[RMDB]
This 177-nucleotide RNA was probed chemically with DMS and 2A3. For DMS the reverse transcriptase was MarathonRT. For 2A3, 1,991 sequencing reads were counted. 2A3 adducts were read by reverse transcription with SuperScript II with manganese.
RNA sequence: GGGAACGACUCGAGUAGAGUCGAAAAGACACGCUUUGCAGAUGACCUCCUCGUUGGUGUGUGUCGGUAAUGUUGUCAGUCACAGGCAACAGUUAACGAUCUGCUUAAAUAAAAAGAGAAGAACAAAAUGAUACUCCGAGUUCGCUCGGAGUAUCAUAAAAGAAACAACAACAACAAC
Reactivity to DMS in 0.01 (KOAc 150mM, MgCl2 10mM, bicine 150mM(pH8.5), 24C), signal-to-noise 1, nucleotides 027 to 126: g010a020c030a010c000g020c000u010u030u000g010c000a080g000a020u000g040a030c020c000u000c120c010u000c130g000u020u070g000g020u000g030u000g000u000g010u010c000g000g000u000a050a090u020g000u010u000g010u000c020a100g010u020c280a100c300a190g000g020c040a040a000c000a010g000u020u000a040a000c010g000a000u000c000u000g000c020u040u010a050a100a040u150a060a050a000a100a090g040a180g000a080a110g000a030a050c120a010a030a170
Reactivity to 2A3 in 0.01 (KOAc 150mM, MgCl2 10mM, bicine 150mM(pH8.5), 24C), signal-to-noise 3, nucleotides 027 to 126: g040a000c000a000c000g010c000u090u110u110g010c010a000g010a060u000g000a000c000c010u040c000c010u100c030g100u130u160g010g000u000g000u000g000u000g000u000c000g000g020u090a090a070u000g000u000u000g010u000c030a060g080u170c010a040c030a160g000g000c000a000a000c000a000g000u050u020a000a000c010g000a000u030c000u000g000c000u000u090a020a010a030u200a040a040a030a040a010g150a000g070a220a040g030a000a010c070a070a100a050